[RMDB]
The data come from the RNA Mapping Database (RMDB), library M2RFPK. Structure probing data (2A3 and DMS) for a 207-nucleotide construct. For 2A3 the reverse transcriptase was SuperScript II with manganese. Values cover nucleotides 27 to 156.

RNA sequence: GGGAACGACUCGAGUAGAGUCGAAAACGCAGAGGGUUCUGAUAACAAAGAACCUAGAUAGCCGCAUCGGUAUUAUAGGAUGUAGUCCGUGAGCCGGAAUGCCUGCAUCGUAAGCCUAUAAGUAAAUUUAAGUGUAAUCACUUCGGUGAUUACACAAGCAUAUUCUUUUCUUCGGAAAAGAAUAUGCAAAAGAAACAACAACAACAAC
Reactivity to 2A3 in 0.01 (KOAc 150mM, MgCl2 10mM, bicine 150mM(pH8.5), 24C), signal-to-noise 6, nucleotides 027 to 156: c050g010c030a030g040a110g060g030g000u000u000c010u020g070a110u100a260a050c020a030a120a010g000a000a000c000c000u020a020g020a070u090a010g070c040c020g050c050a050u060c050g040g000u070a130u300u060a070u170a120g040g020a020u060g050u130a040g070u010c010c000g020u060g050a040g050c050c010g010g070a050a010u060g050c010c010u020g000c000a010u030c020g070u030a060a020g000c010c020u100a100u040a210a090g060u120a080a090a210u160u230u120a160a030g000u000g000u010a000a000u000c000a000c000u020u030c110g090g000u000g000a000u000u000a000c000a000c000a000a000
Reactivity to DMS in 0.01 (KOAc 150mM, MgCl2 10mM, bicine 150mM(pH8.5), 24C), signal-to-noise 2, nucleotides 027 to 156: c040g060c060a090g020a270g010g020g020u000u000c000u040g010a160u010a190a150c300a160a200a050g020a030a030c020c010u010a050g000a130u000a180g030c050c110g040c030a130u000c030g040g020u000a050u000u000a070u000a060g030g000a080u020g020u000a140g030u000c040c030g020u020g010a080g000c050c020g030g000a130a070u000g020c040c030u000g000c010a060u000c030g020u010a110a110g000c050c020u000a070u000a050a070g000u000a030a060a120u000u020u000a070a160g020u000g000u000a010a020u000c000a000c000u020u000c300g060g020u000g020a030u000u000a000c000a000c010a010a080
Annotation:
For DMS, 3,918 sequencing reads were counted.